[RMDB]
RNA sequence: GGGAACGACUCGAGUAGAGUCGAAAACGAUGAGGGGAGAAGAGAAGUGGACAGGUGGGUCGAAGACGCCCGCCCCACGGCGAACGCCCGUCGCUUGUUUGCAUGCGGGGGUCAGACCCCCUUACCGGAUUUACCAGUAUUUCGAUACUGGUAAAUCAAAAGAAACAACAACAACAAC
Reactivity to 2A3 in 0.01 (KOAc 150mM, MgCl2 10mM, bicine 150mM(pH8.5), 24C), signal-to-noise 6, nucleotides 027 to 126: c030g040a050u150g020a040g010g020g020g010a080g010a110a030g040a020g000a170a030g040u050g010g030a050c080a130g020g020u060g020g030g000u040c040g050a110a030g120a050c040g100c020c010c010g000c000c000c010c000a000c010g010g000c020g030a070a020c050g110c030c030c010g040u030c010g000c020u100u250g090u300u280u240g090c040a050u130g010c030g000g010g010g000g000u020c010a000g020a070c010c000c000c010c000u000u020a030c010c020g080
Reactivity to DMS in 0.01 (KOAc 150mM, MgCl2 10mM, bicine 150mM(pH8.5), 24C), signal-to-noise 9, nucleotides 027 to 126: c070g010a060u000g000a040g010g000g010g010a070g010a170a110g000a120g000a100a090g010u000g000g010a110c190a110g010g020u000g020g010g010u000c040g000a110a140g000a110c300g000c010c000c010g010c010c070c090c020a020c030g000g010c080g010a100a090c170g000c040c030c040g010u010c130g010c010u000u010g010u010u010u010g020c070a060u000g010c010g010g000g000g000g010u000c060a110g000a300c110c000c000c010c000u000u000a030c030c040g010